[RMDB]
RNA sequence: GGGAACGACUCGAGUAGAGUCGAAAAGAUAUGGAGAACGACAGGGAGAUCCACUCGGAAACGAGUGAAGAUCGAAGAACUGUCUUCUCCUAAGUCAAAGAAAAACAGACUUCGGUCUGUUUUUCAACGAAUAGAGACGGUUCGCCGUCUCUAUUCGAAAAGAAACAACAACAACAAC
Reactivity to 2A3 in 0.01 (KOAc 150mM, MgCl2 10mM, bicine 150mM(pH8.5), 24C), signal-to-noise 1, nucleotides 027 to 126: g000a000u020a010u100g000g000a020g000a020a060c150g030a010c000a010g000g130g040a120g020a030u000c020c010a000c000u000c010g020g000a060a010a000c010g010a010g020u040g040a070a070g000a000u020c000g010a110a060g090a040a000c000u020g000u020c000u000u000c000u040c000c000u010a000a000g010u000c030a100a150a300g000a000a020a000a010a010c000a000g020a000c020u080u300c300g050g000u010c010u000g000u000u000u000u000u000c000a030a020
Reactivity to DMS in 0.01 (KOAc 150mM, MgCl2 10mM, bicine 150mM(pH8.5), 24C), signal-to-noise 2, nucleotides 027 to 126: g020a010u000a210u000g010g010a010g020a010a020c300g010a000c000a010g000g000g030a150g000a010u000c000c000a000c000u000c000g030g000a020a040a050c000g010a000g010u000g000a090a180g000a000u000c010g000a120a190g010a220a160c020u000g020u000c020u000u000c000u000c000c000u010a010a110g010u000c020a070a120a170g030a010a020a000a010a020c000a030g000a020c000u000u020c280g050g000u000c000u000g000u000u000u000u000u000c020a060a190
Source information:
Chemical mapping of a 177-nucleotide RNA with 2A3 and DMS. 2A3 adducts were read by reverse transcription with SuperScript II with manganese.